[RMDB]
RNA sequence: GGGAACGACUCGAGUAGAGUCGAAAACCGGCUGGGCAACAUUCCGAGGGGACCGUCCCUCGGUAAUGGCGAAUGGGACCCAGAACUCUCUCAGAAUCUAGGGAGAUCUCCCAGAUUCGAGAGAAAAACACACCGUCGUUCGCGACGGUGAAAAGAAACAACAACAACAAC
Reactivity to DMS in 0.01 (KOAc 150mM, MgCl2 10mM, bicine 150mM(pH8.5), 24C), signal-to-noise 3, nucleotides 027 to 129: c020c110g000g000c000u000g010g000g000c090a300a070c030a010u050u010c020c020g000a000g000g000g000g000a150c180c300g090u110c020c020c010u020c000g060g010u000a010a000u010g010g030c000g030a150a040u020g000g120g010a230c020c040c000a010g000a120a090c180u010c020u000c000u020c020a130g040a040a020u010c030u070a210g000g000g000a030g050a140u000c220u000c010c020c000a070g010a000u010u040c000g000a060g020a010g020a020a010a000a040a020c050a120
Reactivity to 2A3 in 0.01 (KOAc 150mM, MgCl2 10mM, bicine 150mM(pH8.5), 24C), signal-to-noise 5, nucleotides 027 to 129: c000c000g000g030c010u010g000g040g000c000a110a030c000a070u010u000c000c000g000a010g020g030g000g030a160c080c050g300u300c030c000c000u000c000g010g000u010a000a010u010g020g010c070g090a080a050u090g020g040g130a080c000c000c000a000g000a000a000c010u000c010u030c000u010c010a100g000a000a010u000c000u170a200g000g010g000a100g040a150u030c120u020c090c010c000a010g000a010u010u000c010g010a010g000a000g000a090a000a010a000a000c060a000
Chemical mapping of a 170-nucleotide RNA with DMS and 2A3. For DMS the reverse transcriptase was MarathonRT. 2A3 adducts were read by reverse transcription with SuperScript II with manganese. The RNA was probed in 150 mM KOAc, 10 mM MgCl2 and 150 mM bicine (pH 8.5) at 24 C. For 2A3, 10,464 sequencing reads were counted.